[RMDB]
RNA sequence: GGGAACGACUCGAGUAGAGUCGAAAAGCCUUGCACCGUAGGAUUAUAGGAGCGCAAACUGACUUGCUCUGGAUAGGCGUAAGGCAUUUUUACUGCUGGGCCGACAAUGUCUUUUGGCAAGUCGAUACGAUGACGAUAGCUUCGGCUAUCGUCAUCGAAAAGAAACAACAACAACAAC
Reactivity to 2A3 in 0.01 (KOAc 150mM, MgCl2 10mM, bicine 150mM(pH8.5), 24C), signal-to-noise 1, nucleotides 027 to 126: g060c000c030u020u080g000c000a000c030c040g120u130a080g000g270a050u070u080a050u270a160g010g010a040g060c060g010c070a150a130a060c110u150g010a030c010u030u040g000c000u010c030u110g020g020a010u020a080g030g010c060g040u050a060a000g000g000c000a000u000u040u010u020u040a030c020u010g000c010u080g000g100g090c050c010g020a060c020a110a190u230g040u070c040u040u220u050u100g010g010c000a010a030g010u050c010g000a000u000a050
Reactivity to DMS in 0.01 (KOAc 150mM, MgCl2 10mM, bicine 150mM(pH8.5), 24C), signal-to-noise 1, nucleotides 027 to 126: g000c020c000u000u010g020c000a060c020c020g020u010a050g030g010a110u010u000a090u020a140g010g010a050g030c050g000c130a030a090a110c250u000g000a060c030u000u000g000c030u010c260u000g000g010a050u000a100g000g000c010g010u000a100a080g020g000c000a030u000u000u000u000u000a110c230u000g000c010u000g000g000g020c030c000g020a090c260a030a100u000g000u000c030u000u010u010u000g010g000c000a060a030g000u000c010g000a130u020a090
Structure probing data (2A3 and DMS) for a 177-nucleotide construct. Source: RMDB library OK2TST, as collected in RNAgym.